The record gives the reactivity of an RNA of 177 nucleotides to 2A3 and DMS. For DMS the reverse transcriptase was MarathonRT. It was measured as part of the RMDB library OK2TST. Values are in units of 0.01, from 0 to 300, in steps of 10.

RNA sequence: GGGAACGACUCGAGUAGAGUCGAAAAGGCAAUGUGGGUAGUCACACCAUCAAAGGCAUUAAAAAGCGCGUGCGUGCUGGCUUUGGUCCUUGUCAAGGGGGAUUCUGUGAGCCUACCAUUGUACGCCCCGAAACGUAAUCUUCGGAUUACGUUUCGGAAAAGAAACAACAACAACAAC
Reactivity to 2A3 in 0.01 (KOAc 150mM, MgCl2 10mM, bicine 150mM(pH8.5), 24C), signal-to-noise 1, nucleotides 027 to 126: g070g000c030a060a000u080g020u060g030g070g020u040a090g110u020c010a040c010a010c070c030a020u080c040a060a020a050g040g000c010a030u050u230a140a110a100a050a000g070c090g000c060g060u080g050c110g040u080g000c040u060g030g010c040u080u010u080g000g000u080c000c000u030u110g130u150c150a120a110g050g050g000g000g010a070u300u080c030u140g050u040g040a020g040c000c010u030a010c030c030a000u030u110g020u020a020c050g000c040c000
Reactivity to DMS in 0.01 (KOAc 150mM, MgCl2 10mM, bicine 150mM(pH8.5), 24C), signal-to-noise 1, nucleotides 027 to 126: g000g010c010a010a030u000g000u000g000g000g010u000a130g020u000c050a050c050a030c040c020a030u000c090a050a070a090g010g000c070a140u000u020a010a080a090a100a100g000c060g020c030g010u030g000c120g030u000g000c020u000g010g010c070u000u020u000g000g000u000c000c010u000u030g000u000c190a060a090g020g000g000g000g000a070u000u010c030u030g020u020g030a050g000c010c010u000a080c210c070a010u000u000g010u000a050c070g030c030c010
The RNA was probed in 150 mM KOAc, 10 mM MgCl2 and 150 mM bicine (pH 8.5) at 24 C.